RNA sequence: GGGAACGACUCGAGUAGAGUCGAAAAAUUGUCUCCUCCUGGCACCAAGAGUCAAAUGGCACCAUGCCAUUCGCUGGUGAUACAAUAUGAAAAUUGGCUGGUGAUUUAACUGGGCCCAGUUAUCCUGUUGGAUGCUGCCUCAGAUAUGAGACUAUAACGAUUAAAAUGAUUUCGAUCAUUUUAAUCGAAAAGAAACAACAACAACAAC
Reactivity to 2A3 in 0.01 (KOAc 150mM, MgCl2 10mM, bicine 150mM(pH8.5), 24C), signal-to-noise 8, nucleotides 027 to 156: a000u070u100g010u000c010u010c010c010u020c000c020u040g050g020c020a030c020c020a080a050g040a040g200u120c030a030a060a090u080g050g000c010a030c040c030a110u230g020c010c020a100u130u090c050g020c040u020g000g030u020g030a020u080a110c040a050a090u120a080u250g090a050a040a030a090u040u020g030g000c030u010g000g030u030g050a090u070u130u110a050a030c010u010g010g000g000c010c050c000a010g020u160u230a020u030c010c000u200g160u300u290g050g000a000u010g000c000u000g010c000c010u030c010a000g020a020u090a090u170g020a010g010a000c000u050a030u080a200a040
Reactivity to DMS in 0.01 (KOAc 150mM, MgCl2 10mM, bicine 150mM(pH8.5), 24C), signal-to-noise 4, nucleotides 027 to 156: a080u000u000g010u000c020u000c020c030u000c020c040u010g020g030c030a060c040c020a060a090g010a130g010u000c040a050a050a050u000g010g010c000a130c110c160a140u000g020c000c010a080u000u010c050g020c040u020g030g030u010g010a130u010a070c060a100a100u010a130u000g000a110a080a090a120u000u000g010g020c030u000g000g010u000g020a130u000u000u000a050a120c030u000g020g030g010c060c020c030a060g030u000u000a070u000c010c010u000g010u000u010g020g010a100u000g000c020u000g010c080c000u000c010a040g010a180u000a090u010g000a060g010a040c030u000a150u010a080a240
An RNA of 207 nucleotides, treated with 2A3 and DMS and read out base by base. For DMS, 12,029 sequencing reads were counted. For 2A3, 6,619 sequencing reads were counted. 2A3 adducts were read by reverse transcription with SuperScript II with manganese. High DMS reactivity at an A or C suggests that its Watson-Crick edge is free.